An RNA of 177 nucleotides, treated with DMS and 2A3 and read out base by base. High DMS reactivity at an A or C suggests that its Watson-Crick edge is free. It was measured as part of the RMDB library M2PK90. For 2A3 the reverse transcriptase was SuperScript II with manganese. For DMS the reverse transcriptase was MarathonRT.
[RMDB]
RNA sequence: GGGAACGACUCGAGUAGAGUCGAAAAUACUAGCAUUCGGUUCCAACCCUGGAUGGAUACUCAAAGGUUGGCUGAGUUCCAUCCUCCGGCCUUGGUUCCGAUGCUCCAUCCAAGGCCGGAAACCAAAUACAGAUCUAGAUUUCGAUCUAGAUCUGUAAAAAGAAACAACAACAACAAC
Reactivity to DMS in 0.01 (KOAc 150mM, MgCl2 10mM, bicine 150mM(pH8.5), 24C), signal-to-noise 4, nucleotides 027 to 126: u010a090c060u000a080g000c050a070u000u010c050g020g000u000u000c040c030a100a190c060c010c030u000g000g000a020u010g010g000a040u010a030c010u000c010a030a100a090g010g020u010u010g000g020c130u000g010a030g000u000u000c000c010a020u000c010c010u000c010c000g000g010c010c010u000u000g000g010u000u000c070c060g000a040u000g000c030u010c060c040a060u000c000c010a010a010g010g020c010c010g010g000a010a040a060c160c090a040a060a130
Reactivity to 2A3 in 0.01 (KOAc 150mM, MgCl2 10mM, bicine 150mM(pH8.5), 24C), signal-to-noise 3, nucleotides 027 to 126: u130a040c060u020a010g040c020a060u060u140c040g040g010u040u030c030c030a060a050c070c010c020u020g010g000a000u000g010g000a030u080a210c000u000c010a020a080a090g200g020u110u050g110g030c040u020g010a000g000u010u020c010c010a000u010c000c000u000c000c000g000g000c010c000u010u000g020g000u090u050c040c010g020a030u040g010c000u010c000c020a020u030c000c010a000a010g020g000c000c010g000g000a020a010a000c010c000a020a050a020